Structure probing data (DMS and 2A3) for a 207-nucleotide construct. It was measured as part of the RMDB library OK3TST. The DMS profile rests on 1,919 reads. The reactions ran in a buffer of 150 mM KOAc, 10 mM MgCl2 and 150 mM bicine (pH 8.5), at 24 C.

RNA sequence: GGGAACGACUCGAGUAGAGUCGAAAAAAACUAAAUGCCCAUUGUGGUAUCCUGGAUUGGAUUCUGGAACCAGAAUAGGGUAUUAGUAUAAAAACUAGUGAAAUAGGAUAAAGGCAGGGCACAGUGGUUCACGCCUAUAAUCCCAACACUUUGGGAACAUUAAAAUCGAGUUCGCUCGAUUUUAAUGAAAAGAAACAACAACAACAAC
Reactivity to DMS in 0.01 (KOAc 150mM, MgCl2 10mM, bicine 150mM(pH8.5), 24C), signal-to-noise 1, nucleotides 027 to 156: a100a080a140c040u020a020a050a050u000g010c020c000c000a300u020u010g020u000g000g020u000a070u000c000c010u000g050g050a080u000u000g020g000a300u000u010c020u000g020g000a060a020c000c010a020g010a050a000u000a080g040g000g020u010a000u010u000a040g000u000a120u020a070a060a070a030a040c060u000a090g020u020g020a070a020a060u000a020g010g000a060u010a020a050a020g000g020c020a130g000g020g010c060a020c020a100g020u010g030g010u000u000c020a020c000g000c070c050u020a030u000a080a100u000c000c000c000a030a070c090a050c080u020u010u000g010g000g000a090a180
Reactivity to 2A3 in 0.01 (KOAc 150mM, MgCl2 10mM, bicine 150mM(pH8.5), 24C), signal-to-noise 2, nucleotides 027 to 156: a000a000a000c180u220a170a160a070u070g000c030c030c010a060u030u140g120u090g060g030u080a170u080c020c020u030g000g030a030u060u050g140g010a090u150u130c040u070g000g000a000a000c000c000a010g000a030a000u030a080g020g040g000u010a000u000u000a000g010u010a060u150a130a060a000a010a000c040u030a000g000u000g100a090a040a000u030a030g050g000a020u060a040a050a000g010g010c050a000g000g000g050c020a030c030a030g040u030g040g000u050u080c040a030c040g040c020c000u050a050u060a020a090u020c010c000c000a030a030c050a010c080u060u100u020g010g000g010a030a010